[RMDB]
This 207-nucleotide RNA was probed chemically with DMS.
The RNA was probed in 150 mM KOAc, 10 mM MgCl2 and 150 mM bicine (pH 8.5) at 24 C.
It was measured as part of the RMDB library M2RFPK.
RNA sequence: GGGAACGACUCGAGUAGAGUCGAAAAUUAAUGAAGCAAAUCUCCAAACGCCAACGAUGAGCGUUUCGCACUCGCCGCUUAAGGCUUUUGCCGAGGCUGCUUGAGCCUUGUUACCAAAGAAAAGCCGAAAACCCAAAUGUCUUCGGACAUUUGGGAACUUAUCUUAGUGGUUCGCCACUAAGAUAAGAAAAGAAACAACAACAACAAC
Reactivity to DMS in 0.01 (KOAc 150mM, MgCl2 10mM, bicine 150mM(pH8.5), 24C), signal-to-noise 1, nucleotides 027 to 156: u020u010a120a140u000g000a180a010g040c050a020a070a100u000c020u020c010c030a030a030a100c080g000c070c010a060a150c040g020a030u000g000a040g020c000g030u010u010u000c080g050c000a030c030u000c010g000c000c020g000c060u000u030a070a150g000g000c030u000u000u000u000g060c050c010g000a130g000g050c010u020g010c130u010u000g010a080g050c050c030u020u000g040u000u000a190c080c040a050a070a140g010a100a070a060a030g050c070c060g020a080a030a050a170c000c010c000a000a030a020u030g000u000c000u000u000c300g040g090a000c020a020u000u020u010g020g000g000a000a000